[RMDB]
About this RNA
Source: RMDB library M2PK50, as collected in RNAgym. This 177-nucleotide RNA was probed chemically with 2A3 and DMS. For DMS, 924 sequencing reads were counted. For DMS the reverse transcriptase was MarathonRT.
RNA sequence: GGGAACGACUCGAGUAGAGUCGAAAAUCUUUGGCUUUCGAGCCAAAGAGUGGGUGCAAUGUCCUUUAAGCACCAAACACGGAAAAACCGUGAAAGGACAUAAAAAUCACAGUUUCGACUGUGAUAACAAUUUGACUCCUUUCGAGGAGUCAAAUUGAAAAGAAACAACAACAACAAC
Reactivity to 2A3 in 0.01 (KOAc 150mM, MgCl2 10mM, bicine 150mM(pH8.5), 24C), signal-to-noise 1, nucleotides 027 to 126: u010c000u000u000u010g010g010c010u000u040u170c230g090a000g000c000c030a000a000a000g020a010g030u180g100g020g010u020g000c040a200a300u090g020u010c000c000u010u010u080a040a010g000c020a000c000c000a000a030a010c000a000c000g000g060a300a060a050a130a000c000c000g000u000g000a030a050a000g010g010a000c010a010u130a050a190a030a010a000u000c010a000c000a020g020u020u110u130c130g100a030c020u000g000u000g010a010u010a000a010
Reactivity to DMS in 0.01 (KOAc 150mM, MgCl2 10mM, bicine 150mM(pH8.5), 24C), signal-to-noise 1, nucleotides 027 to 126: u010c010u000u000u000g000g000c010u000u000u020c120g000a010g040c000c000a010a000a010g000a050g000u000g000g040g020u000g020c060a270a060u010g000u000c000c010u010u000u020a130a160g030c000a030c020c010a050a150a220c010a010c010g000g000a190a070a040a200a260c000c000g030u000g000a030a060a040g000g000a000c000a060u010a040a040a040a120a040u010c000a000c010a000g000u000u020u020c220g000a060c000u000g000u000g010a010u010a030a210